[RMDB]
RNA sequence: GGGAACGACUCGAGUAGAGUCGAAAAGAGUCGAGCAAAACUAAAAGAGGAAACUAAUCUAUCUCCCUGCAAAAUGCUGCCAAGCAACAUCGUCUAGAUCUUAAAUAUAAGAUCAAGCCGAAGUUGGCAAUGAUGACGCUUUCGAGCGUCAUCAUUGAAAAGAAACAACAACAACAAC
Reactivity to DMS in 0.01 (KOAc 150mM, MgCl2 10mM, bicine 150mM(pH8.5), 24C), signal-to-noise 3, nucleotides 027 to 126: g000a050g000u020c020g010a060g000c100a030a110a120a120c120u020a040a040a100a110g010a030g050g030a060a130a070c180u010a050a070u000c050u020a130u040c010u000c010c010c000u010g000c110a050a050a040a040u020g000c000u000g080c070c030a030a130g020c000a000a010c030a040u010c000g000u000c000u000a060g000a010u000c000u000u000a030a090a100u000a090u030a000a060g000a000u000c010a050a010g000c040c000g020a000a030g040u010u000g000g000
Reactivity to 2A3 in 0.01 (KOAc 150mM, MgCl2 10mM, bicine 150mM(pH8.5), 24C), signal-to-noise 4, nucleotides 027 to 126: g080a000g030u110c060g010a040g020c050a020a060a110a140c030u140a070a050a110a100g100a030g030g120a050a090a020c120u090a140a040u040c030u050a100u030c010u010c030c010c010u010g000c040a050a030a090a060u050g010c010u010g000c030c030a050a060g030c010a010a020c000a020u000c000g000u000c000u010a010g000a000u000c000u080u060a100a230a190u290a120u010a090a000g000a000u000c010a020a000g000c010c000g070a060a010g000u020u030g000g000
Chemical mapping of a 177-nucleotide RNA with DMS and 2A3.
Reactivities are given for positions 27 through 126.
Conditions: 150 mM KOAc, 10 mM MgCl2 and 150 mM bicine (pH 8.5), 24 C.
Source: RMDB library RFM100, as collected in RNAgym.
For 2A3 the reverse transcriptase was SuperScript II with manganese.